Chemical mapping of a 207-nucleotide RNA with 2A3 and DMS. For DMS, 2,896 sequencing reads were counted. 2A3 adducts were read by reverse transcription with SuperScript II with manganese. Conditions: 150 mM KOAc, 10 mM MgCl2 and 150 mM bicine (pH 8.5), 24 C.

RNA sequence: GGGAACGACUCGAGUAGAGUCGAAAACUGACAUAAAGGUUUAAAGCUACGGUUACACUUUCUUGCUUUAGAAAUCAUCUCUGUUUCUGGCACUUGUAAUUACAGUGCUGGUAUUGCAACCACUGCAUCUGGUAGGAAAGAGAAAGCUGAUGUGACAAUGUAGUUUCGAUUUCGAUCGAAACUACAUAAAAGAAACAACAACAACAAC
Reactivity to 2A3 in 0.01 (KOAc 150mM, MgCl2 10mM, bicine 150mM(pH8.5), 24C), signal-to-noise 4, nucleotides 027 to 156: c000u030g070a030c020a120u180a060a160a040g070g050u100u080u090a090a110a000g010c030u060a040c100g070g010u140u070a040c050a030c030u020u040u070c020u040u050g030c000u100u140u120a060g030a060a130a040u100c020a160u040c040u010c010u090g110u100u070u030c010u010g020g010c020a020c000u070u100g060u140a140a130u170u150a070c040a040g010u010g000c010u010g000g000u030a060u030u100g030c010a010a050c020c040a090c130u050g010c020a040u040c040u040g030g000u060a030g010g040a030a040a000g040a010g000a040a080a000g030c020u050g020a060u080g060u030g030a030c040a110
Reactivity to DMS in 0.01 (KOAc 150mM, MgCl2 10mM, bicine 150mM(pH8.5), 24C), signal-to-noise 2, nucleotides 027 to 156: c070u000g020a170c130a150u000a110a050a230g010g020u000u000u000a080a110a190g000c030u000a090c100g020g000u000u000a120c070a090c030u000u010u000c020u000u000g020c000u000u020u010a060g010a020a040a080u000c080a090u000c040u010c000u010g040u000u000u000c000u000g020g010c000a020c010u000u020g020u030a160a100u010u010a060c080a040g010u000g010c030u010g050g020u000a050u000u000g020c050a040a050c090c050a080c040u000g020c120a100u000c000u000g010g010u000a100g000g010a050a030a030g000a120g010a080a120a110g000c020u000g020a060u000g020u000g020a100c100a140